Record summary: The record gives the reactivity of an RNA of 177 nucleotides to 2A3 and DMS. For DMS the reverse transcriptase was MarathonRT. The reactions ran in a buffer of 150 mM KOAc, 10 mM MgCl2 and 150 mM bicine (pH 8.5), at 24 C. Reactivities are given for positions 27 through 126.

RNA sequence: GGGAACGACUCGAGUAGAGUCGAAAAAGGUUUUCAUGGAACCGUAAGGAAGGACGCUACAAGAAUCCCCGCUUUUCUAUGCCGUGGAUCCAGCGACUCCCCAAGGAUGCCAAAAACCUGAGAGAAGAAUUGGAGGUUUUUUCGAAAACCUCCAAUUAAAAGAAACAACAACAACAAC
Reactivity to 2A3 in 0.01 (KOAc 150mM, MgCl2 10mM, bicine 150mM(pH8.5), 24C), signal-to-noise 4, nucleotides 027 to 126: a000g050g000u030u010u010u070c120a090u120g000g010a070a060c010c010g010u040a020a010g030g030a060a090g020g050a130c010g010c010u060a060c100a090a070g030a070a080u020c000c000c000c010g010c010u110u120u100u060c140u170a090u100g070c120c020g020u040g000g000a000u010c010c020a000g000c000g010a010c000u000c010c000c000c000a000a000g010g010a040u170g050c000c000a040a030a000a000a000c000c020u010g010a040g010a010g010a180a020g030
Reactivity to DMS in 0.01 (KOAc 150mM, MgCl2 10mM, bicine 150mM(pH8.5), 24C), signal-to-noise 4, nucleotides 027 to 126: a040g010g000u010u000u000u020c190a210u030g000g010a100a090c010c000g000u020a300a300g000g000a030a040g000g010a100c020g020c010u000a100c190a140a130g010a120a030u000c010c000c030c220g000c020u000u010u040u040c210u030a060u010g010c100c020g000u010g000g000a050u010c040c100a030g010c020g010a160c010u000c000c010c010c010a250a270g000g000a060u020g020c010c000a030a030a010a020a010c010c000u010g000a110g010a050g010a140a120g000